[RMDB]
Structure probing data (DMS and 2A3) for a 177-nucleotide construct. DMS adducts were read by reverse transcription with MarathonRT. For 2A3, 16,792 sequencing reads were counted. Source: RMDB library OK2TST, as collected in RNAgym. The DMS profile rests on 26,300 reads.

RNA sequence: GGGAACGACUCGAGUAGAGUCGAAAAAUGAGGUAGCAGCCGAUGCGAAUGCUGAGGGUACGGGAUCGGACGCAGCGGAUGCGGAGGUCGAAUUGGUCGGCAUCCCCAAUGGUGUGACAUGUGCCGACUGACUUAUUGGAUUCGUCCAAUAAGUCAGAAAAGAAACAACAACAACAAC
Reactivity to DMS in 0.01 (KOAc 150mM, MgCl2 10mM, bicine 150mM(pH8.5), 24C), signal-to-noise 9, nucleotides 027 to 126: a080u000g000a080g010g010u010a100g020c060a090g020c030c020g010a210u010g010c030g000a090a150u010g020c030u000g000a100g010g010g020u000a070c090g010g010g010a080u000c040g020g000a130c040g010c030a040g010c050g000g010a210u010g010c040g000g000a250g000g010u000c070g010a080a160u010u010g010g010u000c010g000g000c020a040u000c070c010c010c090a080a080u000g010g020u000g010u000g000a090c090a050u010g000u000g000c000c010g010a080
Reactivity to 2A3 in 0.01 (KOAc 150mM, MgCl2 10mM, bicine 150mM(pH8.5), 24C), signal-to-noise 8, nucleotides 027 to 126: a010u140g010a030g060g030u070a030g030c050a010g030c020c020g030a020u060g020c040g090a120a050u130g010c030u030g020a060g060g120g020u080a050c060g030g040g080a090u170c030g020g010a010c020g000c020a000g010c010g050g030a040u100g020c030g010g030a020g000g020u030c010g010a020a090u120u110g060g010u020c010g010g000c010a030u050c010c000c010c020a040a100u160g050g020u100g040u060g070a020c020a100u090g020u030g030c000c010g010a010